[RMDB]
Description:
The data come from the RNA Mapping Database (RMDB), library OK2TST. Structure probing data (DMS and 2A3) for a 177-nucleotide construct. DMS adducts were read by reverse transcription with MarathonRT. Values are in units of 0.01, from 0 to 300, in steps of 10. 2A3 adducts were read by reverse transcription with SuperScript II with manganese.

RNA sequence: GGGAACGACUCGAGUAGAGUCGAAAAGCUCCUCCGGCAUCGACACGUCUUUCAUCGCGAGCCCCGUGUGGAAUGUCUAUCGAUUUUUCGGAAUGAUGCUGUGCGAAAAUUAUCUAUGGAGCGAUGAAUCAGCUAAUGCUUUCGAGCAUUAGCUGAUAAAAGAAACAACAACAACAAC
Reactivity to DMS in 0.01 (KOAc 150mM, MgCl2 10mM, bicine 150mM(pH8.5), 24C), signal-to-noise 3, nucleotides 027 to 126: g010c090u000c000c000u010c030c040g010g000c090a030u000c000g010a070c070a020c060g020u010c050u010u010u010c030a020u000c060g010c040g000a130g000c090c070c080c050g020u000g020u000g000g000a050a050u010g010u000c010u010a100u000c090g000a050u000u000u010u010u000c000g020g010a120a110u000g010a020u000g020c040u000g020u010g030c110g020a060a030a070a070u010u040a090u010c080u000a100u000g010g000a050g010c010g000a060u000g010a160
Reactivity to 2A3 in 0.01 (KOAc 150mM, MgCl2 10mM, bicine 150mM(pH8.5), 24C), signal-to-noise 2, nucleotides 027 to 126: g010c020u020c000c000u000c000c020g000g020c000a020u000c010g030a000c000a000c090g070u040c000u020u080u040c020a070u080c010g000c030g040a040g050c060c020c000c020g000u000g000u020g040g070a080a050u080g030u000c000u130a240u060c060g030a020u070u040u040u110u080c020g030g050a060a100u160g000a030u000g020c020u040g040u100g100c020g020a030a040a000a130u190u080a070u050c020u000a030u160g030g030a030g010c000g000a000u020g040a010